[RMDB]
RNA sequence: GGGAACGACUCGAGUAGAGUCGAAAAAAAGCAACCCCCGGCUGCCAUUACAUUGCCAUGCCUGUUCAACAAUUCGACACUCUAGGCGGCUUCAAGCGAUUCUCCGAAGUCAUGGAGAUCGGAUUGAUACGAUAGGGAUGUUCGCAUCCCUAUCGUAAAAAGAAACAACAACAACAAC
Reactivity to 2A3 in 0.01 (KOAc 150mM, MgCl2 10mM, bicine 150mM(pH8.5), 24C), signal-to-noise 3, nucleotides 027 to 126: a010a000a020g100c030a060a020c030c000c000c000c020g030g010c020u050g020c040c000a030u050u050a040c040a080u020u130g020c030c010a010u110g000c000c000u050g040u050u060c050a130a110c010a060a080u010u010c000g000a000c030a050c240u020c020u010a030g130g000c000g000g000c000u030u010c020a030a000g050c020g090a110u160u090c050u030c020c080g050a040a060g090u020c030a110u220g000g000a010g000a000u000c000g000g000a040u000u020g000a060
Reactivity to DMS in 0.01 (KOAc 150mM, MgCl2 10mM, bicine 150mM(pH8.5), 24C), signal-to-noise 2, nucleotides 027 to 126: a050a020a040g060c100a080a160c030c000c010c030c020g000g000c050u000g010c070c010a110u020u000a070c080a050u000u010g060c020c020a050u000g000c060c000u010g000u000u000c110a060a150c010a080a040u020u000c000g010a010c060a040c010u010c010u010a090g000g010c090g020g010c070u020u000c000a120a070g000c080g000a060u000u000c020u000c000c040g030a080a030g000u020c090a140u040g020g000a010g000a090u000c010g000g000a050u000u020g010a230
About this RNA
Chemical mapping of a 177-nucleotide RNA with 2A3 and DMS. Reactivities are rounded to 0.1 and cut off at 0 and 3. DMS adducts were read by reverse transcription with MarathonRT. The RNA was probed in 150 mM KOAc, 10 mM MgCl2 and 150 mM bicine (pH 8.5) at 24 C. The DMS profile rests on 2,617 reads.